[RMDB]
RNA sequence: GGGAACGACUCGAGUAGAGUCGAAAAGAAAGAAAGAAUUUGACGGUGAUUAGCCCUAACAGACCUGUAAUGAUUCUUGCGGAUACGAUCGCUUGAUCAAAGAACAUCUAAGGGACUGAGUAAUAAAGAGUAACUAGUUCUUCGGAACUAGUUACUCAAAAGAAACAACAACAACAAC
Reactivity to DMS in 0.01 (KOAc 150mM, MgCl2 10mM, bicine 150mM(pH8.5), 24C), signal-to-noise 4, nucleotides 027 to 126: g000a050a040a040g000a140a080a050g020a070a140u020u000u020g000a050c130g040g000u010g000a080u030u010a070g000c030c010c010u020a090a120c060a040g010a140c060c060u000g020u030a090a080u020g000a050u010u020c010u000u010g010c050g020g030a120u030a060c210g000a150u000c010g010c110u010u030g010a050u010c020a070a050a050g010a070a070c090a010u000c070u020a100a160g000g000g010a080c030u000g000a080g000u000a050a040u020a050a110a060
Reactivity to 2A3 in 0.01 (KOAc 150mM, MgCl2 10mM, bicine 150mM(pH8.5), 24C), signal-to-noise 5, nucleotides 027 to 126: g040a030a030a030g080a040a120a000g090a060a120u080u070u150g110a070c100g020g010u080g010a110u060u140a030g020c010c010c010u010a090a030c020a000g010a040c010c020u060g040u100a050a050u090g060a090u140u140c000u010u020g010c040g090g000a070u090a230c100g060a100u090c030g070c120u070u160g010a010u020c000a030a040a030g050a010a040c030a040u030c020u080a060a050g030g000g030a090c000u030g020a010g110u100a030a040u150a180a070a030